[RMDB]
RNA sequence: GGGAACGACUCGAGUAGAGUCGAAAAUUGUGCUUUAUAUAAGGCUGUAUCUUGUGAGAACUGUAGGUGGAGGGAAUUACCACACUCUCGCUAGCGACAAGAAUCUUGGCCGCACAGUUCUUAGGUGCGGCCCUGAGUCCUUCGGGACUCAGGGCCGAAAAGAAACAACAACAACAAC
Reactivity to 2A3 in 0.01 (KOAc 150mM, MgCl2 10mM, bicine 150mM(pH8.5), 24C), signal-to-noise 4, nucleotides 027 to 126: u110u060g010u020g030c030u070u240u050a110u080a090u040a260a080g000g000c010u020g030u050a200u020c040u040u060g020u040g080a050g000a080a050c020u060g030u140a110g030g030u110g140g030a170g060g020g010a040a130u170u110a130c030c000a030c010a020c050u030c010u010c010g010c050u040a030g030c010g040a000c010a010a020g100a070a090u090c060u060u070g080g000c080c010g020c000a010c000a000g030u050u010c030u040u100a100g000g070u060g080
Reactivity to DMS in 0.01 (KOAc 150mM, MgCl2 10mM, bicine 150mM(pH8.5), 24C), signal-to-noise 2, nucleotides 027 to 126: u040u010g000u000g010c040u030u040u000a080u030a150u040a110a000g010g010c010u030g000u030a060u000c010u000u010g000u000g020a050g030a070a090c100u000g000u020a050g010g000u000g030g000a050g010g010g040a060a150u010u040a090c050c070a020c280a080c000u010c020u000c020g030c020u010a110g010c060g010a090c030a030a040g010a140a090u000c040u000u000g000g000c110c010g020c030a110c000a060g000u000u000c030u040u000a120g000g030u000g030